Notes
This 207-nucleotide RNA was probed chemically with DMS and 2A3.

RNA sequence: GGGAACGACUCGAGUAGAGUCGAAAAGAAUCACCGUACCUAUUUAGGUUUACGCUCCAAGAUCGGUGGAUAGCAGCCCUAUCGAUAUCUAGGAGAACUGUGCUAUGUUUAGAAGAUUAGGUAGUCUAUUACACAGCCAUGUUCGCAUGGCUGUGAACUUCGUAUCAUUGUUCGCAAUGAUACGAAGAAAAGAAACAACAACAACAAC
Reactivity to DMS in 0.01 (KOAc 150mM, MgCl2 10mM, bicine 150mM(pH8.5), 24C), signal-to-noise 2, nucleotides 027 to 156: g000a070a080u000c060a250c020c040g000u000a060c020c010u030a180u000u000u000a040g030g000u000u000u000a090c040g000c060u000c000c020a100a090g010a090u000c010g040g010u010g000g000a100u010a110g000c040a120g000c110c060c020u000a050u000c050g020a110u000a050u010c030u000a160g010g000a090g010a060a040c040u000g020u000g030c030u010a100u000g000u000u000u000a110g000a150a150g030a110u000u000a060g000g020u000a070g020u000c050u000a090u000u010a220c020a020c000a010g020c020c000a030u000g000u000u010c270g020c020a020u000g000g040c010u030g020u020g030a030a070
Reactivity to 2A3 in 0.01 (KOAc 150mM, MgCl2 10mM, bicine 150mM(pH8.5), 24C), signal-to-noise 5, nucleotides 027 to 156: g060a010a050u140c030a020c070c000g010u030a030c010c000u060a120u190u200u210a040g020g010u020u050u090a040c050g010c010u000c000c000a020a010g010a040u030c010g000g000u020g040g030a030u060a070g110c060a010g010c030c010c020u040a020u040c010g010a020u010a030u170c030u050a070g010g010a010g040a030a050c080u080g010u020g040c020u060a030u120g070u040u070u080a160g020a200a040g010a120u110u060a020g080g030u020a030g030u020c030u050a170u070u140a080c010a000c010a000g000c000c000a010u020g040u050u050c110g000c130a010u000g000g000c020u000g000u000g010a000a000

Source information: The RNA was probed in 150 mM KOAc, 10 mM MgCl2 and 150 mM bicine (pH 8.5) at 24 C.